[RMDB]
RNA sequence: GGGAACGACUCGAGUAGAGUCGAAAACGCGUCCUGUUCGCAGGACGCGAAUUAAGGAAACCUUCCUGGUGGCGUGAAUAAAUGAGCACUCGCGCUCAUAAAAUAGGUGGGCGUUCGCGCCCACCAACUGGUAAAUCAAGUUCGCUUGAUUUACCAGAAAAGAAACAACAACAACAAC
Reactivity to 2A3 in 0.01 (KOAc 150mM, MgCl2 10mM, bicine 150mM(pH8.5), 24C), signal-to-noise 3, nucleotides 027 to 126: c010g010c000g010u000c000c000u000g020u040u050c290g040c040a010g000g030a010c010g010c000g000a010a000u120u050a060a010g050g000a030a050a080c000c030u020u030c030c010u070g080g050u050g040g000c060g040u070g030a050a040u120a170a200a080u160g040a040g050c010a020c080u100c060g050c040g010c030u010c050a030u140a030a170a020a020u220a100g000g000u000g010g000g010c000g010u040u050c140g030c000g000c000c010c000a000c010c010a000a020
Reactivity to DMS in 0.01 (KOAc 150mM, MgCl2 10mM, bicine 150mM(pH8.5), 24C), signal-to-noise 4, nucleotides 027 to 126: c020g020c010g020u010c010c000u000g010u000u010c150g010c010a020g020g000a040c020g000c000g000a010a030u000u010a100a080g010g010a080a120a120c080c070u000u000c010c000u000g020g040u000g000g010c050g020u000g010a100a090u010a050a110a050u000g000a050g000c030a160c160u010c150g000c110g000c000u000c030a030u000a040a050a090a100u010a080g010g020u000g020g010g010c010g030u000u000c170g020c000g000c010c000c000a000c000c020a000a030